An RNA of 207 nucleotides, treated with 2A3 and read out base by base. For 2A3, 1,005 sequencing reads were counted. Source: RMDB library RFM130, as collected in RNAgym.

RNA sequence: GGGAACGACUCGAGUAGAGUCGAAAAAUCGAGGCUAGAGUCACGCUUGGGUAUCGGCUAUUGCCUGAGUGUGCUAGAGUCCUCGAAGAGUAACUGCUGACCUUAUUCACUGGCUGUGGGCCUUAUGGCACAGUCAGUCACCAGGUUAGAGACAUGCCAUUCCUAAGCGCUUCGGCGCUUAGGAAUGAAAAGAAACAACAACAACAAC
Reactivity to 2A3 in 0.01 (KOAc 150mM, MgCl2 10mM, bicine 150mM(pH8.5), 24C), signal-to-noise 2, nucleotides 027 to 156: a000u020c000g000a000g000g010c010u020a020g010a040g230u300c020a000c000g000c010u010u010g050g000g010u050a070u140c080g120g070c200u150a140u120u150g000c000c010u010g000a020g020u040g000u020g000c000u010a000g000a000g050u190c010c010u000c000g000a010a000g030a000g040u080a050a120c060u080g000c010u010g110a000c000c000u030u060a090u190u190c050a000c000u000g000g000c000u010g000u050g060g160g000c030c010u230u300a230u300g000g000c010a000c000a000g010u010c000a000g000u000c010a010c040c040a010g000g010u010u000a020g000a010g020a040c030a050u150g040c000